The record gives the reactivity of an RNA of 177 nucleotides to 2A3. Values cover nucleotides 27 to 126. Conditions: 150 mM KOAc, 10 mM MgCl2 and 150 mM bicine (pH 8.5), 24 C. For 2A3 the reverse transcriptase was SuperScript II with manganese.

RNA sequence: GGGAACGACUCGAGUAGAGUCGAAAACAAGUCGCGCCAUCAACAGCACCAUUGCGUAGUUGCGUAAGCUGGACGGUUCCGUGCUGCGCACCGCCUCCAGGAUCAUGUCGACCUGUUCAAGCGAAAGCCAGCUGCAGCAGUUCGCUGCUGCAGCUGGAAAAGAAACAACAACAACAAC
Reactivity to 2A3 in 0.01 (KOAc 150mM, MgCl2 10mM, bicine 150mM(pH8.5), 24C), signal-to-noise 2, nucleotides 027 to 126: c070a000a050g080u110c020g000c000g000c000c020a140u110c030a010a050c000a020g140c080a020c110c010a070u040u060g100c060g020u090a080g090u170u100g000c000g010u090a020a020g030c000u000g100g050a140c150g050g000u020u040c040c020g100u030g010c010u050g060c010g030c040a010c000c000g000c030c000u020c020c000a000g070g000a160u030c070a030u180g070u050c070g000a060c000c000u020g000u020u000c050a100a080g000c000g050a040a000a000g060